RNA sequence: GGGAACGACUCGAGUAGAGUCGAAAAAGGGAAGAAGAUAAUUUAGAAAGGAGAUUCCGCCCCAGCUUGCGGUGCGGCCGAAAGGCUGUAAGGCAUCCCGGAGAGGGGAGGCAAGGCGAAAGCCAAAAACGGUACACCAUCUUCGGAUGGUGUACAAGUACUUAAGCUUAUUCGUAAGCUUAAGUACAAAAGAAACAACAACAACAAC
Reactivity to 2A3 in 0.01 (KOAc 150mM, MgCl2 10mM, bicine 150mM(pH8.5), 24C), signal-to-noise 3, nucleotides 027 to 156: a010g060g010g000a040a030g030a030a030g010a050u130a170a160u230u160u220a140g030a070a060a040g050g010a060g020a040u080u050c020c010g000c030c000c000c000a040g050c060u080u140g040c060g020g000u030g010c020g000g010c010c000g030a030a010a000g020g000c000u010g050u080a030a000g040g030c010a030u030c010c040c020g010g000a030g020a010g000g000g000g010a010g000g020c080a050a070g000g000c010g020a070a020a000g030c000c020a070a040a000a030a000c070g040g000u010a000c000a000c000c000a000u020c000u010u030c100g020g000a010u010g000g020u010g000u000a000c000a000a010
Reactivity to DMS in 0.01 (KOAc 150mM, MgCl2 10mM, bicine 150mM(pH8.5), 24C), signal-to-noise 1, nucleotides 027 to 156: a030g010g010g020a140a050g020a060a070g000a090u000a100a050u010u000u020a090g010a110a050a110g010g020a090g000a130u000u000c070c010g000c020c010c030c030a150g000c100u020u000g020c030g010g050u000g020c010g040g090c000c010g000a110a050a280g020g040c010u000g000u010a020a090g040g040c020a080u000c020c000c010g000g000a090g000a090g030g040g070g020a050g010g000c100a020a030g010g010c020g000a100a030a210g000c000c050a000a050a140a060a110c100g040g000u010a010c000a010c020c000a000u000c010u000u010c250g030g020a040u000g000g020u020g000u000a010c000a020a090
Chemical mapping of a 207-nucleotide RNA with 2A3 and DMS. The DMS profile rests on 1,866 reads. The data come from the RNA Mapping Database (RMDB), library M2RFPK. DMS adducts were read by reverse transcription with MarathonRT. 2A3 adducts were read by reverse transcription with SuperScript II with manganese. For 2A3, 2,710 sequencing reads were counted.